[RMDB]
RNA sequence: GGGAACGACUCGAGUAGAGUCGAAAACUGAACGUGGCCAGCACCGCCUCGACACUGCCUAAAGAGAUCGCGUACUCCGAGCCCCGCUUGCAGCCGCCCAACGGGUACAAGGACACCACGGUGCCCGUACUAUCUGGGAUUUCGAUCCCAGAUAGUAAAAAGAAACAACAACAACAAC
Reactivity to 2A3 in 0.01 (KOAc 150mM, MgCl2 10mM, bicine 150mM(pH8.5), 24C), signal-to-noise 8, nucleotides 027 to 126: c030u040g050a060a010c040g060u080g030g010c020c010a020g010c010a030c020c020g040c010c020u020c010g030a020c020a020c050u060g030c000c010u110a100a100a020g110a010g010a070u070c030g000c020g070u050a060c010u010c030c010g020a020g030c000c000c000c010g020c010u020u080g000c020a010g030c000c010g010c010c010c000a020a020c010g010g000g000u020a010c020a050a110g090g040a050c030a030c060c010a030c050g030g000u020g000c000c000c010g000
Reactivity to DMS in 0.01 (KOAc 150mM, MgCl2 10mM, bicine 150mM(pH8.5), 24C), signal-to-noise 7, nucleotides 027 to 126: c040u010g010a090a110c100g020u010g000g000c010c010a070g010c060a110c050c040g000c030c020u000c040g010a080c050a050c040u000g010c030c040u000a040a070a070g010a090g000a070u010c040g010c070g010u000a080c060u000c020c030g010a140g010c070c010c010c040g000c040u000u010g010c040a060g010c040c040g000c010c020c050a110a130c030g010g000g020u000a010c030a070a080g000g000a090c080a080c070c070a070c110g000g000u000g000c000c000c000g000

The data come from the RNA Mapping Database (RMDB), library OK1LIB. The record gives the reactivity of an RNA of 177 nucleotides to 2A3 and DMS. 2A3 adducts were read by reverse transcription with SuperScript II with manganese. The RNA was probed in 150 mM KOAc, 10 mM MgCl2 and 150 mM bicine (pH 8.5) at 24 C. DMS adducts were read by reverse transcription with MarathonRT.